[RMDB]
RNA sequence: GGGAACGACUCGAGUAGAGUCGAAAAGAAUAUAAAGCGCGAGGGACCAAUUGCGAGCGACCUCGCGCCACCAGCUGACGACUCACCAAGCGCGCAGCCAGAUGGAGGUUACGCUCGCAAGAGAAGAGAUGACCUCAUCGUUCGCGAUGAGGUCAUCAAAAGAAACAACAACAACAAC
Reactivity to 2A3 in 0.01 (KOAc 150mM, MgCl2 10mM, bicine 150mM(pH8.5), 24C), signal-to-noise 1, nucleotides 027 to 126: g030a000a010u280a020u000a050a100a010g070c000g000c000g000a000g030g000g000a030c070c060a000a300u120u100g000c010g020a000g000c030g000a020c000c000u000c000g000c000g000c000c000a050c000c000a000g010c000u100g030a280c030g050a110c020u010c020a170c020c020a130a070g000c020g000c030g000c080a000g000c000c000a000g040a030u200g000g100a020g180g000u090u110a110c120g000c000u000c010g070c000a060a000g000a030g000a070a100g110a000